[RMDB]
RNA sequence: GGGAACGACUCGAGUAGAGUCGAAAAAACAGAUGUCCGAGAGAAUGCAUAUCAGGUGUAUAUACUGAUGCAUAUCCACUAUCUCCUGAUGCAGUCAAUGUUGCUACAACCACACUGUACGCAAACAACCCCUAAUGCAGUUCGCUGCAUUAGGGGUAAAAGAAACAACAACAACAAC
Reactivity to 2A3 in 0.01 (KOAc 150mM, MgCl2 10mM, bicine 150mM(pH8.5), 24C), signal-to-noise 1, nucleotides 027 to 126: a000a010c050a000g020a020u010g090u010c050c080g090a070g000a000g060a220a060u000g000c020a040u020a040u300c000a000g110g000u050g120u060a060u030a010u060a300c000u010g060a010u000g000c010a020u040a060u190c060c060a060c030u040a100u040c060u010c000c040u100g020a090u040g050c000a000g020u000c000a010a120u150g010u000u000g010c040u080a040c010a030a030c040c020a170c000a010c090u040g020u060a010c040g000c080a160a000a090c050a050
Reactivity to DMS in 0.01 (KOAc 150mM, MgCl2 10mM, bicine 150mM(pH8.5), 24C), signal-to-noise 1, nucleotides 027 to 126: a000a070c120a090g010a000u000g000u000c060c060g010a120g030a150g000a000a020u000g030c010a100u000a040u000c000a020g000g010u020g030u010a040u000a060u000a020c060u000g000a000u000g020c000a000u010a100u000c020c050a110c220u000a060u000c050u020c010c060u000g010a120u010g000c060a030g000u000c060a100a060u010g010u000u020g020c030u000a030c100a020a140c030c160a060c140a110c080u000g010u000a020c160g010c050a060a070a080c250a160